Chemical mapping of a 177-nucleotide RNA with 2A3 and DMS. For 2A3 the reverse transcriptase was SuperScript II with manganese. Reactivities are given for positions 27 through 126.
RNA sequence: GGGAACGACUCGAGUAGAGUCGAAAAUAUUUCGCGCCAUUGUAGCUCAGUGCUAGAGCGCUUCACUCGUAUAAAAAUACUGCCAUGAAGAGGUCCCCGGUUCAAUCCCGCGUGGUGGCAAAAAAAAAUACUAAUUCCAAUUCGUUGGAAUUAGUAUAAAAGAAACAACAACAACAAC
Reactivity to 2A3 in 0.01 (KOAc 150mM, MgCl2 10mM, bicine 150mM(pH8.5), 24C), signal-to-noise 1, nucleotides 027 to 126: u120a070u050u070u160c070g000c010g010c010c000a060u090u130g080u130a010g000c010u020c140a140g050u080g140c010u050a050g000a020g080c030g000c000u040u040c020a060c010u050c060g060u100a070u100a210a150a020a070a010u100a080c010u010g030c000c010a040u080g040a080a080g060a030g040g010u000c000c010c010c000g010g000u050u040c030a080a070u080c010c010c000g020c010g010u010g000g000u000g030g050c000a010a000a140a000a000a000a000a000
Reactivity to DMS in 0.01 (KOAc 150mM, MgCl2 10mM, bicine 150mM(pH8.5), 24C), signal-to-noise 3, nucleotides 027 to 126: u000a080u010u000u000c080g020c070g000c020c030a110u000u010g020u010a050g020c020u000c080a080g010u010g010c100u010a050g000a090g020c020g030c020u000u010c080a060c060u000c100g000u000a070u010a010a080a110a110a070u010a040c050u010g000c060c060a070u000g000a090a090g010a080g020g000u000c010c020c010c020g020g010u010u000c120a110a270u000c080c020c020g010c070g010u000g010g010u000g010g010c020a020a010a000a010a010a050a070a140
The DMS profile rests on 2,259 reads. DMS adducts were read by reverse transcription with MarathonRT.